[RMDB]
RNA sequence: GGGAACGACUCGAGUAGAGUCGAAAAGAAAAUUUUUGGCCCGUGUCUAGAAUGGGGCACAUUUCUGACAAUUAAAGUUCCAAAGAACAGCAUCACUGGGGUGGGACUUUUGAAGAUGCUUCCAACCCCUGUAACAUGGUUUCGACCAUGUUACAGGAAAAGAAACAACAACAACAAC
Reactivity to 2A3 in 0.01 (KOAc 150mM, MgCl2 10mM, bicine 150mM(pH8.5), 24C), signal-to-noise 1, nucleotides 027 to 126: g040a020a180a000a000u150u110u000u030u080g090g000c030c030c000g010u060g120u010c110u050a060g070a270a080u190g040g000g000g070c070a010c000a040u080u060u020c040u060g040a020c040a050a060u090u090a140a090a050g020u020u010c040c020a010a090a030g110a140a060c040a000g050c000a040u090c040a040c100u050g000g020g000g040u030g000g000g060a030c000u050u150u060u060g040a060a020g020a050u080g010c000u140u050c030c030a100a150c000c020
Reactivity to DMS in 0.01 (KOAc 150mM, MgCl2 10mM, bicine 150mM(pH8.5), 24C), signal-to-noise 2, nucleotides 027 to 126: g000a050a070a120a130u000u000u000u000u000g020g010c070c010c040g010u000g000u010c060u010a060g000a060a070u000g010g000g000g000c060a010c120a030u010u010u000c030u000g010a130c090a080a050u000u000a050a060a060g010u000u000c000c010a060a090a160g020a050a110c040a040g030c120a070u000c130a070c100u010g000g010g020g030u000g000g010g000a040c030u000u000u000u000g010a080a090g010a070u010g000c060u000u000c030c020a090a130c110c070

Chemical mapping of a 177-nucleotide RNA with 2A3 and DMS. For DMS, 1,566 sequencing reads were counted. Reactivities are given for positions 27 through 126. Conditions: 150 mM KOAc, 10 mM MgCl2 and 150 mM bicine (pH 8.5), 24 C.